[RMDB]
RNA sequence: GGGAACGACUCGAGUAGAGUCGAAAAGCACUCGUUCGCGAGUGCAAAAAGCGUACUACGCUUCGACCAUCGAUCUUAAGAACUACAGGCAUCCCAAAUAGGAUGCCUGCUUAAGGGAGGUCGAGCGUAUCGCAAAAAACUCUAGUUCGCUAGAGAAGAAUACUAAAAAGUUCGCUUUUUAGUAUUCAAAAGAAACAACAACAACAAC
Reactivity to 2A3 in 0.01 (KOAc 150mM, MgCl2 10mM, bicine 150mM(pH8.5), 24C), signal-to-noise 2, nucleotides 027 to 156: g010c000a000c000u010c000g060u100u110c200g020c030g110a010g000u010g000c060a000a000a000a000a100g000c030g020u060a050c070u000a010c030g000c000u210u080c030g010a000c000c000a130u300c020g030a060u020c010u010u000a030a040g030a130a120c100u170a090c230a010g000g000c000a000u020c010c010c020a190a250a190u220a060g010g000a000u000g010c000c000u000g000c000u000u000a000a000g030g010g010a020g010g010u000c000g000a000g000c010g000u010a000u020c000g010c000a000a000a040a030a100a090c000u020c000u000a000g030u080u040c240g040c110u000a010g000a000g000a030a010
Reactivity to DMS in 0.01 (KOAc 150mM, MgCl2 10mM, bicine 150mM(pH8.5), 24C), signal-to-noise 1, nucleotides 027 to 156: g000c010a000c000u000c000g050u000u020c300g030c030g060a010g050u000g070c010a000a000a050a030a090g010c020g010u000a110c100u010a030c020g000c000u000u000c010g020a020c020c010a280u020c140g020a060u000c010u000u010a020a090g010a190a300c000u010a270c000a020g000g010c000a010u000c000c000c000a040a140a240u010a080g010g010a020u000g010c030c000u010g000c000u000u000a030a050g000g000g000a010g010g010u000c000g010a030g000c010g030u000a010u000c010g040c000a010a050a130a130a080a090c000u000c000u000a010g000u000u010c160g010c030u010a010g020a070g010a130a130